[RMDB]
RNA sequence: GGGAACGACUCGAGUAGAGUCGAAAAGAUAUGGAUCUCGAACUACGCUCCACACCUCCCCACCUCGGAAACGAGAGGGUGGGAGCGCGAGAUCCUAAGUCAAAACAGGUAUCUUCGGAUACCUGAACAUAUCAGGGUAGUUCGCUACCCUGAUAUGAAAAGAAACAACAACAACAAC
Reactivity to 2A3 in 0.01 (KOAc 150mM, MgCl2 10mM, bicine 150mM(pH8.5), 24C), signal-to-noise 5, nucleotides 027 to 126: g030a040u090a060u150g000g000a000u000c010u000c010g030a160a090c120u130a060c300g030c010u050c020c030a300c000a040c170c010u050c030c020c010c010a060c000c020u000c000g020g020a050a060a020c020g000a000g000a020g020g020g020u020g000g000g000a000g000c020g000c010g000a000g010a000u000c000c000u020a080a020g060u040c040a010a010a110a180c010a000g010g010u010a010u020c010u080u210c300g090g000a000u000a000c000c010u000g000a010a020
Reactivity to DMS in 0.01 (KOAc 150mM, MgCl2 10mM, bicine 150mM(pH8.5), 24C), signal-to-noise 6, nucleotides 027 to 126: g010a060u000a300u000g010g010a000u000c000u000c000g000a140a120c150u010a300c020g000c000u000c000c000a130c020a040c000c000u000c090c010c000c040a300c100c010u010c010g000g000a090a060a120c010g000a020g000a110g010g000g020u000g000g000g010a010g000c000g030c000g000a010g000a010u000c000c000u010a010a080g000u000c030a050a050a080a180c010a000g000g000u000a000u000c000u010u010c100g020g010a010u000a000c000c000u010g000a030a160